The data come from the RNA Mapping Database (RMDB), library OK2TST. Structure probing data (2A3 and DMS) for a 177-nucleotide construct. The 2A3 profile rests on 623 reads. DMS adducts were read by reverse transcription with MarathonRT.
RNA sequence: GGGAACGACUCGAGUAGAGUCGAAAAUUCGAUUUGGAGCAAUAUCCGCAUGAGAUUCGGCAUAUUACGCUAGCUAAAGAGUCUGACUUAUUGCUUAUCGCGCCUGCUAGUGCAAAUAUCAUCGCAAGACUUUCGUCGUUUUCGAACGACGAAAGUCAAAAGAAACAACAACAACAAC
Reactivity to 2A3 in 0.01 (KOAc 150mM, MgCl2 10mM, bicine 150mM(pH8.5), 24C), signal-to-noise 1, nucleotides 027 to 126: u080u020c020g000a030u150u000u260g220g000a020g000c020a080a030u020a040u170c060c020g030c100a060u210g130a020g020a040u050u030c000g070g020c070a020u030a070u240u030a130c090g020c000u020a020g060c030u160a240a030a000g120a040g000u110c030u060g050a060c010u060u100a110u090u170g000c020u030u120a090u090c020g000c000g000c030c070u050g040c020u060a030g040u000g070c020a040a110a090u190a020u120c080a000u120c000g010c100a110a020
Reactivity to DMS in 0.01 (KOAc 150mM, MgCl2 10mM, bicine 150mM(pH8.5), 24C), signal-to-noise 1, nucleotides 027 to 126: u000u000c020g010a060u000u020u020g020g000a050g000c050a020a070u000a140u000c020c050g000c110a110u020g000a090g020a160u000u010c040g010g000c120a110u000a070u000u030a160c230g000c090u000a070g000c030u000a070a120a200g000a060g010u000c020u000g010a140c090u000u000a060u050u010g000c040u000u000a060u000c060g000c270g020c090c020u020g080c000u020a020g000u000g000c040a030a070a050u010a060u000c100a090u030c060g020c060a040a040